[RMDB]
RNA sequence: GGGAACGACUCGAGUAGAGUCGAAAAUCUCUCUUGUUCGCAAGAGAGAAAAGAACGCCAAAGUGACGCAAACUUCCGCGUCAGGAAGGCGAAACCAGGUAAAAAGGGGGAUCUUCGGAUCCCCCAAGAUGGUGAAUCAGUUCGCUGAUUCACCAUCAAAAGAAACAACAACAACAAC
Reactivity to DMS in 0.01 (KOAc 150mM, MgCl2 10mM, bicine 150mM(pH8.5), 24C), signal-to-noise 2, nucleotides 027 to 126: u000c010u000c000u000c000u000u010g010u010u000c190g050c020a000a010g000a020g020a010g000a000a020a030a090g000a090a170c010g000c000c000a060a100a300g010u020g010a020c000g010c010a130a200a120c250u020u000c110c090g010c020g010u010c020a030g000g010a250a130g020g000c010g000a030a050a100c020c020a140g000g010u020a010a030a080a070a120g010g000g000g010g010a000u000c010u000u030c170g020g000a020u000c000c000c000c000c000a010a010